RNA sequence: GGGAACGACUCGAGUAGAGUCGAAAAGAUAUGGACGUAGGACGACGAUCUGGACGUAACAUCGAUCGGAAACGAUCGUGGUCCAGGGAGUCCGAGGUCCUAAGUCAAAUCCCAGUUCGCUGGGAAACCAUCAAUGUACCUUCGGGUACAUUGAUGGAAAAGAAACAACAACAACAAC
Reactivity to 2A3 in 0.01 (KOAc 150mM, MgCl2 10mM, bicine 150mM(pH8.5), 24C), signal-to-noise 2, nucleotides 027 to 126: g020a010u110a040u140g000g000a000c000g020u040a030g000g000a010c000g030a080c020g000a040u000c000u000g010g000a000c030g080u160a110a030c080a300u300c030g000a010u010c000g010g020a020a060a030c010g010a000u010c020g000u010g010g000u000c000c020a000g000g000g010a000g000u000c000c000g020a010g000g000u000c000c000u000a020a000g000u010c000a000a010a150u000c000c000c000a000g010u050u100c300g020c120u010g020g000g000a090a040a120
Reactivity to DMS in 0.01 (KOAc 150mM, MgCl2 10mM, bicine 150mM(pH8.5), 24C), signal-to-noise 4, nucleotides 027 to 126: g000a040u020a300u010g010g030a030c010g010u010a300g010g010a020c000g020a060c240g020a080u000c000u000g000g000a000c000g000u000a030a080c140a040u010c000g000a000u000c000g030g010a110a080a200c010g000a000u000c000g040u000g010g020u000c010c000a010g000g000g000a070g000u000c000c010g010a140g000g000u000c000c000u000a030a070g010u000c040a130a120a130u000c000c000c000a030g010u000u010c190g020c020u000g000g000g010a040a070a130

Source: RMDB library TTRDEL, as collected in RNAgym. Chemical mapping of a 177-nucleotide RNA with 2A3 and DMS. Reactivities are given for positions 27 through 126. The RNA was probed in 150 mM KOAc, 10 mM MgCl2 and 150 mM bicine (pH 8.5) at 24 C.